RNA sequence: GGGAACGACUCGAGUAGAGUCGAAAAACCUUUGUGUGUUAAUAUCCCAUUGUCAGCGUUGAAGGGACCCAUUGGGUCCUGGAGGACGCUUGGAUUUAUGGGAUUCUAACACACUCUGGUAAAGGCUAUAAGCAGACUUCGGUCUGCUUAUAGCCAACACAUCAUACUCGUUCGCGAGUAUGAUGUGAAAAGAAACAACAACAACAAC
Reactivity to 2A3 in 0.01 (KOAc 150mM, MgCl2 10mM, bicine 150mM(pH8.5), 24C), signal-to-noise 2, nucleotides 027 to 156: a000c000c000u000u000u000g000u000g000u000g000u010u000a030a020u030a030u120c000c000c000a000u010u020g020u010c000a010g000c010g000u060u110g020a020a010g030g010g000a000c000c030c100a300u260u300g070g010g000u000c020c010u000g010g000a010g090g100a000c010g000c000u010u080g030g000a010u100u170u260a010u000g000g000g000a000u000u000c020u010a000a000c000a000c010a000c000u000c000u000g000g010u040a110a080a050g000g000c000u000a000u000a010a000g000c010a000g010a010c010u080u160c300g030g000u000c010u000g000c000u000u000a000u000a000g000c000c000a000a000
Reactivity to DMS in 0.01 (KOAc 150mM, MgCl2 10mM, bicine 150mM(pH8.5), 24C), signal-to-noise 1, nucleotides 027 to 156: a090c010c000u010u000u000g010u000g010u000g040u010u010a030a010u000a010u030c010c010c010a100u000u000g000u000c030a050g010c010g030u010u000g000a300a300g010g000g010a030c010c010c020a300u000u000g080g100g000u000c010c000u000g000g000a270g020g000a030c010g000c000u020u020g010g000a030u010u000u010a060u030g010g010g010a020u000u000c050u000a020a050c000a000c010a010c010u000c030u000g040g020u000a100a090a090g040g030c000u000a010u000a000a010g050c000a010g010a060c010u000u000c270g060g000u000c000u000g000c000u010u000a000u040a010g030c040c010a040a040
Structure probing data (2A3 and DMS) for a 207-nucleotide construct.
Conditions: 150 mM KOAc, 10 mM MgCl2 and 150 mM bicine (pH 8.5), 24 C.